[RMDB]
RNA sequence: GGGAACGACUCGAGUAGAGUCGAAAAUAACGACGUGCCUCAAAGGCAUUUGUAGAGACUUUCGCAAAUGCGAUAUUCGUCAGUACUUUUGUCAUGGAAGCUUGUUUGUCAUCAAACUUAUGCGAUGAUCCCACUCAAUCUUCGGAUUGAGUGGGAUAAAAGAAACAACAACAACAAC
Reactivity to DMS in 0.01 (KOAc 150mM, MgCl2 10mM, bicine 150mM(pH8.5), 24C), signal-to-noise 3, nucleotides 027 to 126: u040a100a060c100g040a060c090g000u000g000c000c020u020c170a050a080a180g000g020c000a000u000u000u010g040u000a070g030a220g020a100c070u000u020u000c020g040c010a100a070a000u040g020c000g000a060u010a080u000u030c210g020u010c000a040g000u020a030c070u000u030u010u020g020u010c030a120u050g010g030a050a110g000c080u000u000g000u020u000u030g020u000c040a020u000c060a030a070a050c170u040u010a080u010g030c080g010a040u000g000
Reactivity to 2A3 in 0.01 (KOAc 150mM, MgCl2 10mM, bicine 150mM(pH8.5), 24C), signal-to-noise 3, nucleotides 027 to 126: u100a020a010c070g050a000c010g020u070g000c000c000u230c080a180a070a050g140g010c010a030u000u010u010g070u190a150g000a000g130a180c000u130u300u000c020g000c000a060a060a000u240g000c000g030a080u090a090u120u150c010g000u010c050a100g000u090a140c030u110u100u000u040g060u090c110a120u120g150g000a070a050g010c000u000u000g040u040u090u050g100u090c060a050u100c000a010a050a070c050u160u110a000u080g080c110g080a030u050g000